Structure probing data (DMS and 2A3) for a 207-nucleotide construct. For 2A3, 2,456 sequencing reads were counted. The DMS profile rests on 2,850 reads. The reactions ran in a buffer of 150 mM KOAc, 10 mM MgCl2 and 150 mM bicine (pH 8.5), at 24 C. Source: RMDB library OK3TST, as collected in RNAgym.

RNA sequence: GGGAACGACUCGAGUAGAGUCGAAAAUUUAAUGGAAUUCGUGUGCUAAAACAGGUUGCUAAUAACUGUUGGUUGACAUGUGCUACAUAUCAAUUACAACUUGCUGAUUGCUAUGAAGCAGACGACUACUCGCUUUUUAAAGUGGGUAGUGUUAAGCGACCAGUGUUACAUUCGUGUAACACUGGUCAAAAGAAACAACAACAACAAC
Reactivity to DMS in 0.01 (KOAc 150mM, MgCl2 10mM, bicine 150mM(pH8.5), 24C), signal-to-noise 2, nucleotides 027 to 156: u000u000u000a100a130u000g040g010a050a110u000u000c070g040u000g010u000g050c020u000a060a120a090a050c020a050g010g040u000u000g010c040u000a110a060u000a050a260c120u000g020u010u000g020g070u000u000g020a120c040a010u000g030u000g030c060u010a090c040a010u000a040u000c040a060a020u000u000a060c040a130a110c130u000u000g010c040u000g000a160u000u000g000c050u010a170u010g030a090a120g020c050a110g010a100c100g010a090c000u000a020c010u000c010g020c010u000u000u000u010u030a050a080a050g020u000g010g030g000u000a010g010u000g000u000u000a060a150g010c130
Reactivity to 2A3 in 0.01 (KOAc 150mM, MgCl2 10mM, bicine 150mM(pH8.5), 24C), signal-to-noise 5, nucleotides 027 to 156: u120u070u090a100a080u120g070g060a070a070u160u060c050g000u060g020u040g090c050u110a120a070a040a020c050a040g020g060u070u050g050c080u100a110a060u110a160a160c060u040g020u040u010g070g010u030u020g020a030c030a100u070g050u030g070c000u010a040c000a010u030a010u020c020a020a010u030u020a050c030a120a110c140u110u210g030c050u040g050a040u010u000g000c010u010a020u040g010a050a000g000c010a010g040a130c060g040a010c000u000a000c000u000c010g030c020u090u060u020u070u290a210a230a000g010u020g010g010g010u000a000g000u000g000u020u050a040a030g050c050